[RMDB]
RNA sequence: GGGAACGACUCGAGUAGAGUCGAAAAGUCAUUAUGUUCGCAUAAUGACAAAUAUAUCGGACUAUAUAAAACCUGAUAGCCGUCCAAGAUCAUGUAUCGGCAAAAACAGACGAUUCGUCGUCUGUAACCAUAAUUCGUAGUUCGCUACGAAUUAUGGAAAAGAAACAACAACAACAAC
Reactivity to 2A3 in 0.01 (KOAc 150mM, MgCl2 10mM, bicine 150mM(pH8.5), 24C), signal-to-noise 7, nucleotides 027 to 126: g000u000c000a010u010u000a000u000g030u030u060c210g000c100a000u000a000a000u010g000a000c000a000a050a000u090a000u010a020u060c020g040g040a020c050u020a020u030a030u060a300a130a050a080c010c010u030g040a080u050a060g020c000c000g020u000c040c010a060a030g070a110u140c070a070u160g070u130a050u100c020g020g000c030a070a020a020a050a010c000a000g000a000c010g000a010u020u050c170g030u010c000g000u000c110u000g000u000a000a010
Reactivity to DMS in 0.01 (KOAc 150mM, MgCl2 10mM, bicine 150mM(pH8.5), 24C), signal-to-noise 4, nucleotides 027 to 126: g010u000c000a000u000u000a000u000g010u000u010c190g020c010a000u000a000a010u010g000a010c010a040a070a070u010a100u000a030u000c030g010g000a070c060u000a060u010a080u010a100a050a100a160c040c020u000g010a030u000a050g000c040c020g010u000c120c050a070a110g000a060u000c130a070u010g020u000a030u000c030g010g010c130a060a080a060a090a030c000a010g000a010c000g010a030u000u010c180g010u000c000g000u000c000u000g010u000a030a110